[RMDB]
RNA sequence: GGGAACGACUCGAGUAGAGUCGAAAAAGAAGGACAACCUUUGUUUUAAAGGUAUACCUUCGCUUUUUAGAACAGCGAGGAUCUUAUGAGUUGAGCUUUUGUUAUUUGAGACUUUAUCUCGGGCUCCACAUAUAUUAGGUUUCGACCUAAUAUAUGUAAAAGAAACAACAACAACAAC
Reactivity to 2A3 in 0.01 (KOAc 150mM, MgCl2 10mM, bicine 150mM(pH8.5), 24C), signal-to-noise 9, nucleotides 027 to 126: a000g020a000a000g020g010a020c050a040a030c020c000u050u050u050g300u080u240u110u240a040a030a010g020g000u040a060u080a090c000c000u030u050c000g000c000u110u060u020u030u140a080g030a090a030c020a030g020c010g020a020g040g020a040u020c020u050u130a110u190g110a110g070u050u050g040a060g040c000u050u060u060u070g100u100u100a150u080u050u040g070a060g000a010c000u030u020u040a080u140c010u000c000g000g010g000c010u000c000c000
Reactivity to DMS in 0.01 (KOAc 150mM, MgCl2 10mM, bicine 150mM(pH8.5), 24C), signal-to-noise 9, nucleotides 027 to 126: a100g000a020a010g010g020a050c140a060a020c000c000u000u000u000g010u030u030u030u030a010a020a020g000g010u010a050u020a120c010c000u000u000c010g010c110u010u010u010u010u020a080g010a080a080c130a040g000c030g010a110g010g000a050u010c020u010u010a070u020g000a080g010u010u000g000a110g000c030u000u000u010u010g010u010u010a090u010u000u000g010a300g000a030c010u000u000u000a020u030c010u000c000g000g000g000c030u000c010c040